[RMDB]
RNA sequence: GGGAACGACUCGAGUAGAGUCGAAAAAAGACAAAGAAGUACCAACCGACCACGUUCCGGCGGAAAAGGUCAUCAGUGGCGUAGUCAUUGAGCGUAAAGCAGGUCUCGGAAGCAAGAUCCGGGAAACGUUCAUGGGCGUUUCUGCACGAGAAGUAGGCUUGAGUCAUGGAUUCGUCCAUGACUCAAGAAAAGAAACAACAACAACAAC
Reactivity to DMS in 0.01 (KOAc 150mM, MgCl2 10mM, bicine 150mM(pH8.5), 24C), signal-to-noise 2, nucleotides 027 to 156: a090a080g020a140c040a050a080a080g010a060a100g060u010a140c040c030a100a160c020c000g000a110c000c020a080c040g000u000u010c020c030g020g030c040g040g010a050a040a070a030g010g010u000c010a100u010c030a110g010u020g000g000c000g010u000a090g000u000c050a060u000u010g000a040g010c070g010u030a090a050a130g000c060a120g010g020u000c020u000c010g010g000a090a110g000c110a070a090g010a100u000c000c030g060g030g000a020a040a010c010g040u000u000c050a100u010g000g000g020c000g000u000u000u010c010u000g010c070a080c050g010a160g000a060a100g020u000a100g000g010
Reactivity to 2A3 in 0.01 (KOAc 150mM, MgCl2 10mM, bicine 150mM(pH8.5), 24C), signal-to-noise 2, nucleotides 027 to 156: a000a000g140a060c130a040a060a020g130a110a020g070u110a050c010c010a040a000c020c040g040a110c000c020a050c030g030u070u050c040c030g010g000c020g040g000a000a010a020a010g040g020u000c010a090u040c010a030g040u000g050g000c060g070u100a040g050u060c060a060u050u100g030a020g010c050g060u130a010a140a000g000c040a020g080g050u060c010u010c020g000g010a030a030g050c070a030a010g060a190u020c000c010g030g000g000a010a040a020c020g010u050u030c020a070u140g060g010g000c000g010u040u070u000c040u010g040c050a010c090g050a030g020a100a010g040u150a070g040g060